An RNA of 177 nucleotides, treated with DMS and 2A3 and read out base by base. Conditions: 150 mM KOAc, 10 mM MgCl2 and 150 mM bicine (pH 8.5), 24 C. Reactivities are given for positions 27 through 126. The data come from the RNA Mapping Database (RMDB), library RFM100. The 2A3 profile rests on 2,281 reads.
[RMDB]
RNA sequence: GGGAACGACUCGAGUAGAGUCGAAAAGCCAAGCGCAGGUAGCCGCGAAAGCCGAGUGCCAGUACAUCAACCAGACUUUCGACUGGUUUAUCCUGCGGGAAGCUGUCUUGCCAGAGCGCCCAGGUAUCAGGGUUGGUUAAUUCGUUAACCAACCCUGAAAAGAAACAACAACAACAAC
Reactivity to DMS in 0.01 (KOAc 150mM, MgCl2 10mM, bicine 150mM(pH8.5), 24C), signal-to-noise 2, nucleotides 027 to 126: g000c000c020a080a300g000c010g000c020a030g020g020u000a020g000c010c030g050c000g000a010a030a020g030c050c030g040a260g000u020g020c170c020a080g000u000a150c180a110u000c080a130a100c060c040a080g000a060c010u000u000u000c020g000a130c040u030g020g020u000u030u000a010u050c010c000u020g020c000g000g000g040a160a120g010c000u020g000u000c010u000u000g000c070c030a020g040a040g040c080g040c000c000c000a000g000g000u010a080u000
Reactivity to 2A3 in 0.01 (KOAc 150mM, MgCl2 10mM, bicine 150mM(pH8.5), 24C), signal-to-noise 4, nucleotides 027 to 126: g000c000c000a040a030g130c000g000c010a000g040g010u070a040g000c000c010g020c000g010a030a010a000g000c020c030g090a070g060u050g120c070c020a050g130u130a090c030a200u150c020a020a040c030c010a050g070a120c030u040u060u020c050g080a120c110u240g030g000u000u000u000a060u150c000c000u010g020c000g000g000g000a010a000g010c030u050g020u040c020u020u020g030c010c010a020g010a000g030c020g020c000c010c000a020g060g050u110a090u070